Source: RMDB library M2PK90, as collected in RNAgym. Chemical mapping of a 177-nucleotide RNA with DMS.
RNA sequence: GGGAACGACUCGAGUAGAGUCGAAAAAUCUUGGCGAAGUCAGCGCGGAAGGAGCGCGCAACUCCUUACCCUCGCCUUUUUUUUUCCGCUCCCGAUCGCGAAAGCGUUCAGCGGAAAAGGGACCAAAACUCUACAAGGCUUUCGAGCCUUGUAGAGUAAAAGAAACAACAACAACAAC
Reactivity to DMS in 0.01 (KOAc 150mM, MgCl2 10mM, bicine 150mM(pH8.5), 24C), signal-to-noise 1, nucleotides 027 to 126: a050u000c090u000u000g000g020c030g000a050a130g020u000c190a120g010c140g080c270g010g010a070a010g000g010a030g010c000g020c270g020c150a030a120c000u000c010c000u000u000a080c080c000c010u000c030g000c000c000u000u000u000u000u000u000u000u000u000c020c010g010c010u000c140c060c110g000a030u000c000g020c000g010a150a130a170g030c000g040u000u000c030a080g010c000g000g040a000a000a010a090g000g000g010a130c080c060a050a050a090